[RMDB]
RNA sequence: GGGAACGACUCGAGUAGAGUCGAAAAACGGACUACGGUCCGAUAUAUGAGUUCAACUCCAAACACUCAAAACUCAUUGUUGAAUGGAAUGAGAUAUUUUGAGUGUUUGGAAUUGAACUCGUAUAAAACCUGUGACACGGUUCGCCGUGUCACAGGUAAAAGAAACAACAACAACAAC
Reactivity to 2A3 in 0.01 (KOAc 150mM, MgCl2 10mM, bicine 150mM(pH8.5), 24C), signal-to-noise 4, nucleotides 027 to 126: a000c000g000g000a000c010u060a010c230g110g000u000c010c010g000a000u010a000u000a000u030g000a000g000u000u010c000a020a010c010u000c000c010a010a000a000c010a000c000u000c000a000a010a010a030c000u000c000a020u000u090g220u150u210g200a150a160u300g120g150a040a010u030g000a010g020a030u070a220u170u000u000u010g010a000g000u010g000u000u000u000g000g000a000a000u000u000g000a000a000c000u000c000g000u000a000u000a000a000a000
Description: Source: RMDB library RFM100, as collected in RNAgym. An RNA of 177 nucleotides, treated with 2A3 and read out base by base. The reactions ran in a buffer of 150 mM KOAc, 10 mM MgCl2 and 150 mM bicine (pH 8.5), at 24 C. For 2A3 the reverse transcriptase was SuperScript II with manganese. Values cover nucleotides 27 to 126.